[RMDB]
RNA sequence: GGGAACGACUCGAGUAGAGUCGAAAACAGUGGAGGAGGCAGCUGAGGAGGAGCAGCCCCAGAAAAAGGCAUCCCCAUUUGCAAAUCUGCUGGGUGGAGGCACCCAGAAGGUGGCAGCCAAGGCGGAGCCUAGACGUGGUUUCGACCACGUCUAGGCAAAAGAAACAACAACAACAAC
Reactivity to 2A3 in 0.01 (KOAc 150mM, MgCl2 10mM, bicine 150mM(pH8.5), 24C), signal-to-noise 2, nucleotides 027 to 126: c040a010g040u040g040g040a090g020g010a020g020g020c020a010g000c030u030g030a030g030g030a030g010g010a020g070c000a020g020c000c000c000c030a030g180a040a060a010a000a010g060g000c010a080u030c010c020c010c000a090u100u070u130g000c000a020a080a240u000c020u030g000c010u010g010g020g000u040g020g050a150g050g170c000a000c000c000c000a000g010a010a010g030g010u030g020g050c040a020g000c030c040a020a010g050g000c030g030g030a030
Reactivity to DMS in 0.01 (KOAc 150mM, MgCl2 10mM, bicine 150mM(pH8.5), 24C), signal-to-noise 2, nucleotides 027 to 126: c060a090g020u010g000g000a110g020g020a080g010g030c050a080g010c050u000g010a130g020g000a100g010g000a110g020c070a080g000c050c020c000c050a100g010a010a070a020a110a080g000g010c070a130u000c030c010c000c060a140u020u000u000g000c020a040a090a040u000c020u000g000c010u000g000g000g020u000g000g010a230g000g000c020a020c000c000c000a040g000a030a030g000g030u000g020g030c030a080g020c130c080a050a060g020g010c090g000g000a180